[RMDB]
RNA sequence: GGGAACGACUCGAGUAGAGUCGAAAAAUCAGUCCACUGGACUGAUUUCUGAUCCCGCUUCGAUCCGUUGGAUAAUACGAUAAGACAAAUAAUUAGAGCGGUUCCAGUGACUCUGUUUUAACUGGAAGAUUAAUCUAGUCUUCGGACUAGAUUAAUCAAAAGAAACAACAACAACAAC
Reactivity to DMS in 0.01 (KOAc 150mM, MgCl2 10mM, bicine 150mM(pH8.5), 24C), signal-to-noise 3, nucleotides 027 to 126: a000u000c000a000g000u010c000c000a190c270u010g030g010a020c000u000g020a000u000u010u000c090u010g020a170u000c020c000c010g020c100u000u000c100g010a070u000c070c020g050u010u010g010g020a110u000a070a100u000a090c110g010a110u000a090a120g000a100c120a060a080a160u020a060a110u020u000a090g010a070g020c020g000g010u000u000c000c010a010g000u000g010a110c090u000c120u000g000u000u000u010u000a110a080c020u000g000g000a030a040
Reactivity to 2A3 in 0.01 (KOAc 150mM, MgCl2 10mM, bicine 150mM(pH8.5), 24C), signal-to-noise 3, nucleotides 027 to 126: a010u010c010a000g000u000c020c020a200c300u240g010g010a000c000u000g000a000u000u020u010c030u070g090a060u010c000c000c000g000c030u070u050c070g050a080u000c000c020g080u040u110g080g050a070u040a160a070u100a150c080g050a030u050a140a050g120a050c020a020a210a060u180a120a100u190u130a060g020a010g080c050g000g000u000u000c000c010a010g020u000g050a060c020u080c100u290g140u080u120u030u060a040a020c000u020g000g000a000a010
Conditions: 150 mM KOAc, 10 mM MgCl2 and 150 mM bicine (pH 8.5), 24 C. Chemical mapping of a 177-nucleotide RNA with DMS and 2A3. The data come from the RNA Mapping Database (RMDB), library RFMREP.